[RMDB]
RNA sequence: GGGAACGACUCGAGUAGAGUCGAAAAAGAAAGCAAGGCGAAGGGAAGCCACCACCGCGGGAGCUGUACGUUGAACGAGAGCUCAGCUUUUACCUUCCCAAACCGCGGAAAGGGAAAACCCAAAAAAUCUAACCAGUAAGUUCGCUUACUGGUUAGAAAAAGAAACAACAACAACAAC
Reactivity to 2A3 in 0.01 (KOAc 150mM, MgCl2 10mM, bicine 150mM(pH8.5), 24C), signal-to-noise 2, nucleotides 027 to 126: a010g040a020a010a000g010c020a030a120g010g000c020g100a070a100g050g000g010a050a000g010c010c020a010c000c000a010c030c010g010c000g040g020g030a010g000c000u000g030u110a040c020g020u050u300g260a300a040c030g010a040g020a000g070c010u000c010a000g000c000u040u000u000u020a020c020c060u010u000c000c000c000a030a040a030c010c000g020c040g010g050a040a050a090g030g010g000a050a030a010a050c020c020c040a040a030a000a010a000a080
Reactivity to DMS in 0.01 (KOAc 150mM, MgCl2 10mM, bicine 150mM(pH8.5), 24C), signal-to-noise 3, nucleotides 027 to 126: a070g020a060a010a010g010c030a260a070g020g010c020g020a180a130g010g010g000a190a090g010c000c000a090c020c010a030c000c000g010c020g000g020g000a010g010c000u000g040u010a090c040g000u010u020g010a070a150c050g020a170g010a010g010c010u000c010a090g000c010u000u000u010u010a080c110c090u020u000c000c000c010a070a120a070c010c010g010c030g000g010a030a040a080g030g000g000a070a020a110a180c000c000c030a000a010a050a070a050a080

This 177-nucleotide RNA was probed chemically with 2A3 and DMS. Reactivities are rounded to 0.1 and cut off at 0 and 3. The reactions ran in a buffer of 150 mM KOAc, 10 mM MgCl2 and 150 mM bicine (pH 8.5), at 24 C. It was measured as part of the RMDB library M2PK90.